[RMDB]
RNA sequence: GGGAACGACUCGAGUAGAGUCGAAAACAGGCGUGUACGGUCGUGGGACUUCUAGCUUCUGGAGGGUUCGGCUGGAAAGUCUUGAUGUUGAUUGUCAUGGUUUCAGCCUCUGAACGUCUGGGAAGGGGGUGUCCUGUCUGCAUUACUUUUAGUGCUAGGAUUAAUCCAUAUUCGUAUGGAUUAAUCCAAAAGAAACAACAACAACAAC
Reactivity to 2A3 in 0.01 (KOAc 150mM, MgCl2 10mM, bicine 150mM(pH8.5), 24C), signal-to-noise 4, nucleotides 027 to 156: c080a010g040g000c050g020u100g080u160a050c110g020g040u090c070g040u210g020g000g030a020c000u030u030c040u140a000g010c000u060u030c020u070g010g010a030g020g040g010u050u080c030g010g000c010u020g030g030a030a020a030g070u040c010u060u060g010a050u030g040u240u110g080a200u080u200g000u030c030a030u020g040g040u010u030u030c020a010g010c020c000u000c020u020g030a060a020c020g100u060c110u120g110g010g040a050a020g020g020g010g000g020u060g010u050c000c010u050g050u050c030u040g020c010a020u050u050a100c050u140u210u100u160a040g010u040g060c040u030a040

This 207-nucleotide RNA was probed chemically with 2A3. For 2A3 the reverse transcriptase was SuperScript II with manganese. It was measured as part of the RMDB library OK3TST. For 2A3, 2,261 sequencing reads were counted.